[RMDB]
RNA sequence: GGGAACGACUCGAGUAGAGUCGAAAAAUGGAUCACAGAAUACAUCGGGAAGACGGUUUGGUUUGUGCCUAGCGUGAAAAUGGGAAAUGAGAUUGCCCUUUGUCUACAACGUGCCGGAAAGAAAGUAGUCCAAUUGAACAGAAAGUCGUAUGAGACGACACGUUCGUUAAUUCGUUAACGAACGUGUAAAAGAAACAACAACAACAAC
Reactivity to DMS in 0.01 (KOAc 150mM, MgCl2 10mM, bicine 150mM(pH8.5), 24C), signal-to-noise 2, nucleotides 027 to 156: a030u000g000g020a120u000c020a130c050a140g000a190a170u000a120c060a100u000c050g000g030g060a150a120g010a050c090g050g010u000u000u000g030g010u010u000u020g040u010g000c030c050u000a120g020c020g060u010g010a070a000a070a080u010g020g010g000a040a030a080u000g010a100g000a300u000u010g010c000c040c040u020u010u010g010u000c010u010a100c030a030a050c070g000u000g020c000c030g000g010a030a030a130g000a090a070a110g010u000a070g000u000c020c020a060a200u000u010g000a030a080c080a130g010a040a060a070g010u000c000g000u000a110u000g000a140g000a080c050g010
Reactivity to 2A3 in 0.01 (KOAc 150mM, MgCl2 10mM, bicine 150mM(pH8.5), 24C), signal-to-noise 5, nucleotides 027 to 156: a030u090g020g020a010u050c030a030c010a060g110a080a080u110a080c040a110u040c060g000g010g020a030a030g050a040c020g030g000u050u080u100g060g000u040u060u110g010u050g010c010c030u050a050g030c040g030u100g110a030a030a030a090u100g010g010g040a050a080a060u150g000a080g030a070u020u150g040c000c030c000u040u030u060g060u020c030u050a050c030a100a030c070g040u070g020c020c030g040g040a040a050a000g060a010a070a030g040u050a030g020u000c000c000a030a100u110u120g040a060a020c030a030g120a070a080a020g000u020c010g000u080a130u210g050a040g000a030c020g010

An RNA of 207 nucleotides, treated with DMS and 2A3 and read out base by base. For 2A3 the reverse transcriptase was SuperScript II with manganese. For DMS, 4,064 sequencing reads were counted.